[RMDB]
RNA sequence: GGGAACGACUCGAGUAGAGUCGAAAAUACAGCCUUAGUUCAGAUCACAUAUGACUAUCUUUUGCGAGUCUGAUCGAUACUCUGAUGAAGGCUGUACCCUCUCUCUUCUUCUCUUAGCUUCUUGAUGCAGUAGAAAGGGGUUCGCCCCUUUCUACUGAAAAGAAACAACAACAACAAC
Reactivity to DMS in 0.01 (KOAc 150mM, MgCl2 10mM, bicine 150mM(pH8.5), 24C), signal-to-noise 4, nucleotides 027 to 126: u010a040c000a010g000c000c010u000u010a090g020u010u000c040a020g010a040u010c120a150c200a110u020a080u020g000a050c020u000a080u030c030u020u010u010u010g010c130g000a030g000u000c010u000g000a070u020c140g010a100u020a060c180u010c050u000g030a040u110g020a030a040g000g010c000u000g000u000a000c030c020c000u000c030u000c010u000c020u000u000c010u000u000c000u000c010u010u010a070g010c020u010u010c020u000u000g000a050u030g000
Reactivity to 2A3 in 0.01 (KOAc 150mM, MgCl2 10mM, bicine 150mM(pH8.5), 24C), signal-to-noise 9, nucleotides 027 to 126: u070a000c000a000g000c000c000u110u090a100g100u090u040c010a000g000a020u060c050a010c050a110u160a080u220g010a020c010u050a100u260c070u090u290u170u290g100c150g040a010g020u000c010u060g050a070u100c050g020a030u040a140c050u020c020u050g030a030u050g050a020a010g000g000c000u000g000u000a000c000c010c000u000c010u000c000u000c000u040u000c010u040u000c020u000c010u050u100a030g010c000u040u020c000u020u050g020a060u120g050